[RMDB]
An RNA of 207 nucleotides, treated with DMS and 2A3 and read out base by base. The data come from the RNA Mapping Database (RMDB), library OK3TST. The reactions ran in a buffer of 150 mM KOAc, 10 mM MgCl2 and 150 mM bicine (pH 8.5), at 24 C.
RNA sequence: GGGAACGACUCGAGUAGAGUCGAAAAGAAGCAGUCCUUAUUGUGUGUGAUGUUUAGUCAUCGCACUGUCCCUACGGGCUGCCAACGUAGGACCAAUGUGCCGAGAGGCACUAGAAGUACGGCUUAUUAUGAGGCAUCGCCGUACCAAAGAUGCUGAGACUAUUACCGGUUUCGACCGGUAAUAGUCAAAAGAAACAACAACAACAAC
Reactivity to DMS in 0.01 (KOAc 150mM, MgCl2 10mM, bicine 150mM(pH8.5), 24C), signal-to-noise 2, nucleotides 027 to 156: g000a090a080g000c030a020g000u000c000c000u010u000a160u000u000g030u010g050u000g000u000g030a040u000g010u000u030u000a180g010u010c020a040u000c010g070c000a040c030u010g030u000c060c020c010u000a200c120g000g000g040c000u010g020c000c060a030a080c070g030u010a060g020g000a260c050c030a090a120u000g000u000g040c000c000g030a300g000a300g010g020c060a010c010u010a090g020a150a090g020u000a030c020g000g020c020u020u000a120u010u000a190u020g000a080g000g010c070a120u000c130g010c020c000g020u010a050c020c040a220a100a160g020a100u000g000c010u000g000a300
Reactivity to 2A3 in 0.01 (KOAc 150mM, MgCl2 10mM, bicine 150mM(pH8.5), 24C), signal-to-noise 4, nucleotides 027 to 156: g100a020a000g000c000a000g000u030c030c020u130u170a200u200u200g090u030g000u000g000u000g020a010u010g100u040u170u190a300g140u180c000a000u000c000g010c010a000c010u020g080u030c020c010c010u020a040c040g000g030g000c010u010g000c020c010a080a000c020g110u090a070g010g150a020c020c050a050a040u090g000u010g000c000c000g010a030g020a030g050g000c000a000c000u010a010g030a070a010g010u020a000c000g000g000c010u140u050a080u170u130a110u300g050a030g040g070c020a010u050c010g010c000c000g040u010a010c000c010a020a130a020g040a030u070g020c010u020g030a030